[RMDB]
Structure probing data (DMS) for a 177-nucleotide construct.
RNA sequence: GGGAACGACUCGAGUAGAGUCGAAAAAAAAAAGAUAUGGAUUCGCUUAGAGAGCGAGGAUCGGGAACUAUAUCGGAAACGAUAUAGGGAACGGGAGCUCGAUUGAGCGAAUCCUAAGUCAAAAAAACAGUCACUAUAUGUUCGCAUAUAGUGACUGAAAAGAAACAACAACAACAAC
Reactivity to DMS in 0.01 (KOAc 150mM, MgCl2 10mM, bicine 150mM(pH8.5), 24C), signal-to-noise 1, nucleotides 027 to 126: a010a020a070a110a110a100g000a030u000a300u000g000g010a020u010u000c000g020c000u000u020a030g000a190g000a010g010c000g000a070g000g010a030u000c000g010g000g000a300a030c000u000a000u000a010u020c010g000g000a140a090a140c020g000a000u000a010u000a000g000g000g000a300a220c000g000g000g000a030g000c020u000c010g000a300u050u000g000a030g020c020g000a000a000u000c000c000u010a000a060g000u000c000a000a000a080a070a000a120a130
Source: RMDB library TTRDEL, as collected in RNAgym. DMS adducts were read by reverse transcription with MarathonRT. Reactivities are given for positions 27 through 126. Conditions: 150 mM KOAc, 10 mM MgCl2 and 150 mM bicine (pH 8.5), 24 C.